The data come from the RNA Mapping Database (RMDB), library OK2TRN. The record gives the reactivity of an RNA of 177 nucleotides to DMS and 2A3. In probing experiments dimethyl sulfate is read out at A N1 and C N3, which are open when not base-paired. For DMS, 12,369 sequencing reads were counted. DMS adducts were read by reverse transcription with MarathonRT. Conditions: 150 mM KOAc, 10 mM MgCl2 and 150 mM bicine (pH 8.5), 24 C.

RNA sequence: GGGAACGACUCGAGUAGAGUCGAAAAAUGGCACGGGGGGAGCCAUGAAGCGAUGAAGCGGGGACCCCAGAAGGACAGCCUGGGGUGCUGGGGAGGAGCAUCCCCCUAGCCCUGAUGAGGAGGUGGCUAACCCUCUAUAUUUCGAUAUAGAGGGUUAAAAAGAAACAACAACAACAAC
Reactivity to DMS in 0.01 (KOAc 150mM, MgCl2 10mM, bicine 150mM(pH8.5), 24C), signal-to-noise 7, nucleotides 027 to 126: a050u000g000g000c030a090c140g010g010g000g010g010g010a150g000c020c020a030u010g000a130a130g010c050g010a120u010g020a100a120g010c060g010g000g010g000a100c010c000c000c010a010g010a110a080g020g010a080c190a110g000c130c010u000g010g000g010g020u000g000c080u010g000g000g000g010a110g000g010a140g010c110a110u000c010c000c000c010c010u000a060g010c010c030c030u000g010a110u010g000a110g000g010a100g000g010u010g000g010c130
Reactivity to 2A3 in 0.01 (KOAc 150mM, MgCl2 10mM, bicine 150mM(pH8.5), 24C), signal-to-noise 2, nucleotides 027 to 126: a000u040g010g000c030a000c100g010g000g010g000g000g010a000g010c000c000a030u070g030a060a020g070c020g080a100u130g080a090a010g030c030g010g020g000g040a020c000c010c010c010a000g020a060a040g120g040a020c020a040g040c010c000u020g010g000g000g000u000g000c010u010g000g020g020g010a100g020g010a040g030c020a080u080c000c000c000c000c000u010a020g000c000c000c020u080g030a080u090g020a030g030g020a020g010g030u080g020g000c010